[RMDB]
RNA sequence: GGGAACGACUCGAGUAGAGUCGAAAAUGCAAAUGUUGUCAGACACUUUAGACAAAUUGUCUGAUUACUGUACGUUUGUUUGUUGGGCUCAUGGCUUUGAAUUAACGUCUGCAUCAUACUUUUGCAACAUAUUAGCAUCGUUCGCGAUGCUAAUAUGAAAAGAAACAACAACAACAAC
Reactivity to 2A3 in 0.01 (KOAc 150mM, MgCl2 10mM, bicine 150mM(pH8.5), 24C), signal-to-noise 2, nucleotides 027 to 126: u040g000c000a030a000a050u100g000u070u030g010u010c010a010g000a020c000a010c020u100u030u060a170g080a180c100a060a070a030u050u010g000u000c010u010g000a010u040u050a040c030u020g040u060a010c000g010u000u030u020g080u050u090u020g240u110u300g030g010g000c020u070c080a090u110g080g000c000u110u010u230g000a030a020u080u030a050a000c000g020u010c010u020g010c000a020u060c010a010u080a160c020u040u110u090u070g010c000a030a040
Reactivity to DMS in 0.01 (KOAc 150mM, MgCl2 10mM, bicine 150mM(pH8.5), 24C), signal-to-noise 5, nucleotides 027 to 126: u000g010c020a030a090a050u010g010u000u000g010u000c000a010g000a010c010a020c170u010u010u000a120g020a160c270a040a020a020u000u000g010u000c000u000g000a030u000u000a040c060u010g010u010a040c030g010u000u000u010g000u000u000u000g020u010u010g010g000g000c040u000c170a120u010g010g010c010u000u010u000g020a050a030u000u010a020a040c050g000u000c050u000g000c070a040u000c140a080u010a100c060u000u000u000u010g020c090a090a240